[RMDB]
RNA sequence: GGGAACGACUCGAGUAGAGUCGAAAAAAAGUUAGCGUACUAGAGUCGCCGUGAGUACGCUAUGGUUCCGUGAGACUCUACUCGAGCGUAUCACGGAACCCACGUUCAUACCGUACGUGCUAUAAAAUAUUACACUCUAAUUCGUUAGAGUGUAAUAAAAAGAAACAACAACAACAAC
Reactivity to 2A3 in 0.01 (KOAc 150mM, MgCl2 10mM, bicine 150mM(pH8.5), 24C), signal-to-noise 6, nucleotides 027 to 126: a000a000a000g090u020u010a010g000c000g000u000a000c000u030a030g110a150g220u150c090g040c110c010g130u110g040a010g010u000a000c000g000c000u000a010u030g020g010u070u010c040c030g000u020g010a050g000a000c000u000c000u000a010c010u000c010g000a000g000c010g000u000a050u040c020a010c000g010g020a030a040c010c020c000a010c000g010u030u030c060a140u120a300c090c110g010u010a000c010g010u010g040c060u130a110u190a300a100a050a020
Reactivity to DMS in 0.01 (KOAc 150mM, MgCl2 10mM, bicine 150mM(pH8.5), 24C), signal-to-noise 5, nucleotides 027 to 126: a040a020a050g000u000u000a010g010c000g010u000a010c000u000a270g010a250g020u010c050g000c040c030g010u010g010a050g020u000a000c000g010c000u000a000u000g010g000u000u000c030c020g010u000g010a230g000a020c010u000c000u000a010c010u000c000g000a000g010c050g010u000a070u000c030a060c040g000g000a060a030c040c070c000a030c030g000u000u010c040a110u000a090c230c140g010u000a030c030g020u000g010c120u000a080u000a040a060a060a100